[RMDB]
Structure probing data (DMS and 2A3) for a 177-nucleotide construct. The RNA was probed in 150 mM KOAc, 10 mM MgCl2 and 150 mM bicine (pH 8.5) at 24 C. 2A3 is a SHAPE reagent: it acylates the 2'-hydroxyl of flexible nucleotides of all four kinds. For DMS, 2,378 sequencing reads were counted.
RNA sequence: GGGAACGACUCGAGUAGAGUCGAAAAGAUAUGGAUGUAGAGCAACAGCUACUGCAUCGGAAACGAUGUGUAGACAUGCUUGAGGUCCUAAGUCAAACCUCAACUACUCUUCGGAGUAGUUGAGGAAGACUAUGUAGGGCUUCGGCCCUACAUAGUCAAAAGAAACAACAACAACAAC
Reactivity to DMS in 0.01 (KOAc 150mM, MgCl2 10mM, bicine 150mM(pH8.5), 24C), signal-to-noise 3, nucleotides 027 to 126: g030a030u000a150u000g000g010a020u000g000u000a280g010a000g030c000a080a110c300a120g000c000u000a010c000u010g030c010a010u000c000g000g020a080a080a100c000g000a020u000g000u000g020u010a010g000a060c120a170u000g010c000u000u000g010a190g000g020u000c000c010u010a030a090g000u000c010a120a100a220c000c000u010c000a000a000c000u000a000c000u000c000u000u010c150g030g000a030g000u000a000g010u000u010g000a000g000g000a020a010
Reactivity to 2A3 in 0.01 (KOAc 150mM, MgCl2 10mM, bicine 150mM(pH8.5), 24C), signal-to-noise 3, nucleotides 027 to 126: g020a010u050a020u090g000g020a030u260g010u150a020g000a010g010c030a030a240c110a240g060c020u000a020c020u120g060c000a000u000c000g000g010a030a020a000c000g000a000u000g010u000g000u030a000g060a130c100a210u220g000c000u020u050g050a080g160g040u000c000c000u010a070a010g030u010c040a080a030a140c010c010u030c000a000a000c000u010a000c000u000c000u010u090c300g060g000a000g010u000a000g010u010u020g010a010g000g000a000a030